[RMDB]
RNA sequence: GGGAACGACUCGAGUAGAGUCGAAAAUAAUUAAAAUCUAUCCCGGGGUCAAGUAUGAUGAUUGGAGCCGAAUGGCCUAGAAAAUGCAUCCGUUCCGUCCUCGGAGAUGAUUGAGUAGCUGUCCCGGAUUCCUACCGGGGUUCGCCCCGGUAGGAAUAAAAGAAACAACAACAACAAC
Reactivity to 2A3 in 0.01 (KOAc 150mM, MgCl2 10mM, bicine 150mM(pH8.5), 24C), signal-to-noise 2, nucleotides 027 to 126: u100a020a070u140u140a020a060a020a060u040c020u040a070u000c010c000c010g000g030g000g000u100c030a080a110g020u100a140u160g010a000u000g060a060u040u080g100g060a040g000c000c000g160a230a110u300g000g000c000c020u130a080g050a020a220a000a000u300g030c000a010u010c000c030g030u040u100c070c050g000u000c000c000u000c010g020g000a170g020a060u010g020a000u000u060g060a060g200u060a010g050c040u050g020u100c000c000c000g000g020
Reactivity to DMS in 0.01 (KOAc 150mM, MgCl2 10mM, bicine 150mM(pH8.5), 24C), signal-to-noise 1, nucleotides 027 to 126: u070a080a090u050u020a030a050a050a000u020c000u020a050u000c020c000c020g010g020g010g030u000c020a090a110g000u030a090u010g000a010u000g000a110u020u010g000g000a100g010c010c030g020a200a080u090g020g000c000c080u000a080g000a080a070a050a030u030g000c000a000u000c030c070g020u000u000c050c040g000u000c010c010u000c020g000g000a060g020a060u000g000a000u000u000g000a060g000u000a080g000c150u000g000u000c000c000c000g000g000